The record gives the reactivity of an RNA of 170 nucleotides to DMS and 2A3. For 2A3 the reverse transcriptase was SuperScript II with manganese. For DMS the reverse transcriptase was MarathonRT. The data come from the RNA Mapping Database (RMDB), library 15KLIB. The 2A3 profile rests on 39,615 reads. The RNA was probed in 150 mM KOAc, 10 mM MgCl2 and 150 mM bicine (pH 8.5) at 24 C.
[RMDB]
RNA sequence: GGGAACGACUCGAGUAGAGUCGAAAAAUAGGCUUAUCAAGAGAGGUGGAGGGACAGGCCCGAUGAAACCCGGCAGCCAGAAAUGGUGCCAAUCCCUGCAGCGGAAACGUUGAAAGAUGAGCCGAUGGACGAAUCCUGUUCGCAGGAUUCAAAAGAAACAACAACAACAAC
Reactivity to DMS in 0.01 (KOAc 150mM, MgCl2 10mM, bicine 150mM(pH8.5), 24C), signal-to-noise 7, nucleotides 027 to 129: a040u040a050g010g020c020u010u020a020u030c000a090a070g000a080g000a100g040g050u000g000g000a040g000g000g050a070c110a020g000g030c000c000c000g050a050u000g010a090a170a060c030c030c020g000g020c060a010g040c000c020a030g000a070a060a060u020g000g040u000g020c000c000a040a040u020c090c010c010u000g020c060a020g020c030g000g000a110a070a090c040g030u000u000g000a060a080a070g000a030u020g010a040g010c030c020g000a080u040g000g010a070c120
Reactivity to 2A3 in 0.01 (KOAc 150mM, MgCl2 10mM, bicine 150mM(pH8.5), 24C), signal-to-noise 7, nucleotides 027 to 129: a010u140a030g000g000c000u010u010a000u020c030a080a030g050a000g010a050g070g010u020g000g010a010g010g000g010a020c010a000g070g050c000c000c000g070a140u040g010a010a010a010c000c000c000g000g000c000a040g170c000c000a010g030a000a030a020u040g010g000u000g010c000c000a000a020u020c010c000c000u030g020c020a010g020c000g020g000a050a020a020c010g020u020u030g030a060a040a010g010a010u000g000a000g000c000c000g000a050u080g070g040a010c050